[RMDB]
Structure probing data (DMS and 2A3) for a 177-nucleotide construct.
2A3 adducts were read by reverse transcription with SuperScript II with manganese.
It was measured as part of the RMDB library OK2TRN.
Reactivities are rounded to 0.1 and cut off at 0 and 3.
For 2A3, 1,645 sequencing reads were counted.
For DMS the reverse transcriptase was MarathonRT.

RNA sequence: GGGAACGACUCGAGUAGAGUCGAAAAUCUGCUAGACACACAAGGUGUAAAAUUAAGUCUUAUCUCAGCAAGAAAGAGUACAUUACAAUGCUGUGUGAUAAGCACUUUCUGGGAAUGAGGUCAGUGCCGACUUGAAAGUUUUCGAACUUUCAAGUCGAAAAGAAACAACAACAACAAC
Reactivity to DMS in 0.01 (KOAc 150mM, MgCl2 10mM, bicine 150mM(pH8.5), 24C), signal-to-noise 3, nucleotides 027 to 126: u010c030u000g040c030u000a070g000a130c030a030c040a100c110a070a080g020g020u010g020u000a040a030a070a130u010u000a060a140g010u000c010u000u000a050u000c010u000c040a100g040c100a090a090g010a050a100a020g020a110g010u000a100c220a120u000u000a080c050a110a120u010g000c050u000g010u020g020u030g000a020u000a020a050g000c050a010c060u000u010u000c050u010g010g000g000a070a070u000g010a060g000g020u000c060a080g030u000g030c150
Reactivity to 2A3 in 0.01 (KOAc 150mM, MgCl2 10mM, bicine 150mM(pH8.5), 24C), signal-to-noise 2, nucleotides 027 to 126: u000c010u030g070c020u050a080g050a060c040a000c000a010c030a200a020g130g000u050g050u080a050a080a060a060u160u120a100a010g040u000c000u040u000a090u020c010u000c030a030g020c030a090a000g090a180a110a010g070a030g060u090a040c030a120u170u080a040c030a100a110u050g160c030u020g040u020g020u050g120a030u010a050a020g000c030a000c000u020u040u000c020u040g010g000g140a130a150u100g040a000g050g000u040c010a010g010u000g100c010